Chemical mapping of a 177-nucleotide RNA with DMS and 2A3. The RNA was probed in 150 mM KOAc, 10 mM MgCl2 and 150 mM bicine (pH 8.5) at 24 C. It was measured as part of the RMDB libraries RFM100 and RFMREP. Reactivities are given for positions 27 through 126.
[RMDB]
RNA sequence: GGGAACGACUCGAGUAGAGUCGAAAACCAAUGCUGUAACCCAAUACAGGUCCACUGAUAAGGUGGGUGGCGGCAAAUAACGCCAUACGAUGAGUAGGGGCGUUAUGUUGAAUACCGGUUAAGGAUAAAUACUAUUUUAAUUCGUUAAAAUAGUAUUAAAAGAAACAACAACAACAAC
Reactivity to DMS in 0.01 (KOAc 150mM, MgCl2 10mM, bicine 150mM(pH8.5), 24C), signal-to-noise 9, nucleotides 027 to 126: c010c010a130a110u020g020c010u000g010u010a070a040c050c030c060a120a130u010a080c060a030g010g010u020c070c120a060c010u010g010a160u020a080a110g010g020u000g000g010g020u000g010g030c040g000g000c030a040a070a010u000a010a000c000g010c000c000a090u000a000c000g000a120u030g000a300g000u000a010g000g030g000g010c000g000u000u000a000u000g000u000u010g000a080a100u010a100c080c070g000g010u010u010a100a130g010g000a130u020a060
Reactivity to 2A3 in 0.01 (KOAc 150mM, MgCl2 10mM, bicine 150mM(pH8.5), 24C), signal-to-noise 9, nucleotides 027 to 126: c010c000a020a020u120g030c010u000g010u050a050a050c030c000c010a050a040u040a040c010a000g000g040u120c040c040a100c050u040g040a150u170a270a060g120g030u020g010g000g020u030g060g000c000g010g000c020a060a030a060u010a010a000c000g000c000c000a000u000a000c020g040a050u250g030a020g030u010a010g140g190g000g000c000g000u000u000a010u010g020u000u050g030a120a060u050a170c010c020g060g080u120u140a080a050g060g000a020u130a080